[RMDB]
RNA sequence: GGGAACGACUCGAGUAGAGUCGAAAACGAUAUGUUCGCAUAUCGAAAAAACCGUAGGAAAUGGGCAGAGCGAUAAGCUGCACCUUCGAAAGAGGGUGGCAGCUUUUGACGCUCGAUGCAUUUCCUAAACGGAAAAAUAGUGCAUUCGUGCACUAAACCUUUACGAAUGAUUCGUCAUUCGUAAAGGAAAAGAAACAACAACAACAAC
Reactivity to DMS in 0.01 (KOAc 150mM, MgCl2 10mM, bicine 150mM(pH8.5), 24C), signal-to-noise 3, nucleotides 027 to 156: c020g010a010u000a000u000g030u000u000c300g060c020a010u000a000u000c000g020a000a080a110a070a060a110c000c010g030u000a050g000g010a020a000a020u010g020g020g020c080a300g000a010g020c000g030a170u000a020a020g020c010u000g000c000a070c000c010u000u000c010g020a230a130a230g000a030g010g010g020u000g010g020c010a000g000c000u000u000u000u000g010a190c050g010c010u000c030g010a100u010g010c010a040u000u000u000c000c000u000a010a030a120c010g000g010a030a050a090a100a100u000a020g020u000g010c000a100u000u000c260g030u000g000c010a030c010u000a010a070a120
Reactivity to 2A3 in 0.01 (KOAc 150mM, MgCl2 10mM, bicine 150mM(pH8.5), 24C), signal-to-noise 4, nucleotides 027 to 156: c010g000a010u000a000u000g040u060u110c190g020c150a000u010a020u020c020g060a070a000a010a000a010a030c020c000g010u020a010g010g030a010a010a010u050g030g180g090c130a020g010a000g020c010g030a040u000a060a010g010c000u010g000c000a000c010c000u010u000c010g060a100a060a030g010a000g000g000g010u020g060g010c000a000g000c010u010u000u000u020g030a010c010g000c010u000c010g000a000u030g010c000a000u000u000u010c010c010u000a020a040a000c010g000g050a050a060a030a030a030u090a010g000u020g000c000a020u040u100c290g110u090g010c000a010c000u020a070a050a040
Structure probing data (DMS and 2A3) for a 207-nucleotide construct.
Values cover nucleotides 27 to 156.
For 2A3, 5,842 sequencing reads were counted.
The RNA was probed in 150 mM KOAc, 10 mM MgCl2 and 150 mM bicine (pH 8.5) at 24 C.